The data come from the RNA Mapping Database (RMDB), library RFMREP. This 177-nucleotide RNA was probed chemically with DMS and 2A3. The RNA was probed in 150 mM KOAc, 10 mM MgCl2 and 150 mM bicine (pH 8.5) at 24 C.
RNA sequence: GGGAACGACUCGAGUAGAGUCGAAAACGGUCGGGCUGCUCUUGUUGUGCCGGAGAGAAAGGUAGUUGGCUUUCGGGCUGGCUGCUGUUUCCUUAGUGCGUUGAACAACCGGCUCAGAACUGGAGCGACAUCUUAGCUAGUUCGCUAGCUAAGAUGUAAAAGAAACAACAACAACAAC
Reactivity to DMS in 0.01 (KOAc 150mM, MgCl2 10mM, bicine 150mM(pH8.5), 24C), signal-to-noise 3, nucleotides 027 to 126: c110g030g000u010c050g010g010g020c070u000g020c020u000c000u010u010g010u010u000g010u010g020c020c010g000g010a150g010a110g000a030a020a150g000g000u000a010g030u000u000g010g010c010u000u000u010c180g020g010g010c000u000g000g010c000u000g010c010u000g000u000u000u000c010c030u000u000a160g030u000g000c090g000u010u010g000a090a060c040a060a230c030c020g000g000c000u000c040a050g020a100a060c040u010g000g000a030g010c020g000
Reactivity to 2A3 in 0.01 (KOAc 150mM, MgCl2 10mM, bicine 150mM(pH8.5), 24C), signal-to-noise 2, nucleotides 027 to 126: c020g000g090u070c020g060g070g010c060u060g010c010u010c000u040u040g050u050u010g020u070g020c020c010g000g010a100g010a000g000a040a030a000g000g000u000a010g000u010u030g030g000c000u030u040u070c200g070g000g000c010u010g010g000c000u000g000c010u050g300u010u000u020c000c000u010u070a060g040u040g060c080g080u100u130g080a030a010c010a030a070c050c010g030g000c020u010c010a050g040a060a040c020u030g010g020a000g000c020g020